Conditions: 150 mM KOAc, 10 mM MgCl2 and 150 mM bicine (pH 8.5), 24 C.
The record gives the reactivity of an RNA of 170 nucleotides to 2A3 and DMS.
It was measured as part of the RMDB library 15KLIB.
Values cover nucleotides 27 to 129.

RNA sequence: GGGAACGACUCGAGUAGAGUCGAAAAAUAACGCCGGUGAAACUCUUGGAAGCGGAAGAAGGAAGGCGGAGAAAAGGAGCGGGCCCUCCGAUCCGAGGGGCCCGACGCCCCUGAUCUGGAGAGCACUAAAGGUCCCGCUUCGGCGGGACCAAAAGAAACAACAACAACAAC
Reactivity to 2A3 in 0.01 (KOAc 150mM, MgCl2 10mM, bicine 150mM(pH8.5), 24C), signal-to-noise 1, nucleotides 027 to 129: a020u100a010a000c020g010c100c000g090g010u100g100a070a000a130c000u000c020u080u020g030g040a020a020g110c030g040g010a000a000g000a040a000g000g020a000a000g000g010c000g000g000a010g040a000a050a000a010g020g000a100g010c040g000g000g060c000c000c000u000c000c010g020a020u090c070c000g070a060g000g000g030g000c000c000c000g000a050c060g000c000c000c060c010u010g050a020u000c020u030g030g010a030g000a000g030c030a010c000u080a050a060a000
Reactivity to DMS in 0.01 (KOAc 150mM, MgCl2 10mM, bicine 150mM(pH8.5), 24C), signal-to-noise 3, nucleotides 027 to 129: a040u000a090a050c140g040c000c010g060g040u100g040a130a110a050c030u040c080u060u010g040g000a050a060g000c160g010g040a090a030g030a040a020g030g010a040a060g000g000c060g020g020a070g060a040a070a080a120g000g070a100g000c040g000g030g030c010c040c000u010c040c060g010a120u000c050c220g060a030g030g010g000g020c070c080c160g040a060c250g000c050c010c020c030u030g030a060u050c050u070g020g000a050g000a050g010c100a110c140u030a020a180a070